The record gives the reactivity of an RNA of 177 nucleotides to DMS. Reactivities are given for positions 27 through 126. In probing experiments dimethyl sulfate is read out at A N1 and C N3, which are open when not base-paired. The DMS profile rests on 1,833 reads. DMS adducts were read by reverse transcription with MarathonRT. The RNA was probed in 150 mM KOAc, 10 mM MgCl2 and 150 mM bicine (pH 8.5) at 24 C.
[RMDB]
RNA sequence: GGGAACGACUCGAGUAGAGUCGAAAAGAGCGCGAAGCGGAGCAGCGCAGGAAGGAGGAGCAGCAGCGGAGGGAACAGCAGGAGCGCGACGCGCAGAAGCAGCAGCAGCAGCAGCAGGCGCUCGCGACACUUUCAUACCCUUCGGGGUAUGAAAGUGAAAAGAAACAACAACAACAAC
Reactivity to DMS in 0.01 (KOAc 150mM, MgCl2 10mM, bicine 150mM(pH8.5), 24C), signal-to-noise 2, nucleotides 027 to 126: g000a100g050c010g010c010g020a120a140g030c100g020g000a120g030c070a120g020c090g000c050a070g010g000a070a070g000g000a090g000g000a080g000c070a090g000c110a050g010c060g000g020a090g010g000g000a060a060c080a110g000c090a080g010g000a090g020c020g010c010g000a010c180g020c000g020c000a070g020a150a100g010c040a070g030c040a090g000c120a080g000c020a080g010c030a030g020c150a210g000g000c000g030c000u000c000g010c000g000a220